The data come from the RNA Mapping Database (RMDB), library M2PK90. Structure probing data (2A3 and DMS) for a 177-nucleotide construct. The DMS profile rests on 1,240 reads. For DMS the reverse transcriptase was MarathonRT.

RNA sequence: GGGAACGACUCGAGUAGAGUCGAAAAGCAAAGAAAUUUUAUCCCAAUAAGGCGAAGCGUGCAAGUCGAAUAAAGCUAAUGCUGCUAGCGAGCACGCGAGCCCUAGCAGACUGCUAGCGAGAAAAAACCCAUUAGAUUCGUUCGCGAAUCUAAUGGGAAAAGAAACAACAACAACAAC
Reactivity to 2A3 in 0.01 (KOAc 150mM, MgCl2 10mM, bicine 150mM(pH8.5), 24C), signal-to-noise 1, nucleotides 027 to 126: g070c070a160a020a020g090a050a270a020u140u170u100u050a120u080c010c000c000a050a080u190a080a060g030g000c000g070a080a040g000c000g010u020g040c010a080a080g070u090c010g080a130a070u160a150a130a000g030c020u040a140a090u270g170c070u030g000c000u040a030g000c000g000a020g020c020a010c010g000c010g000a020g000c010c010c010u000a000g000c000a040g080a300c080u120g040c000u030a020g020c020g050a070g080a090a130a020a000a000a080
Reactivity to DMS in 0.01 (KOAc 150mM, MgCl2 10mM, bicine 150mM(pH8.5), 24C), signal-to-noise 2, nucleotides 027 to 126: g000c180a030a030a050g010a160a080a100u010u000u000u000a090u000c010c010c020a100a220u050a120a080g020g010c000g010a140a180g000c010g010u000g020c020a110a150g020u000c070g010a100a080u010a080a100a050g010c010u000a090a080u010g010c050u000g020c130u010a060g010c000g020a300g000c000a010c010g010c000g000a150g000c010c000c010u000a000g010c010a110g000a160c170u000g030c010u010a010g000c260g000a100g000a000a060a040a030a060a090
For 2A3, 740 sequencing reads were counted.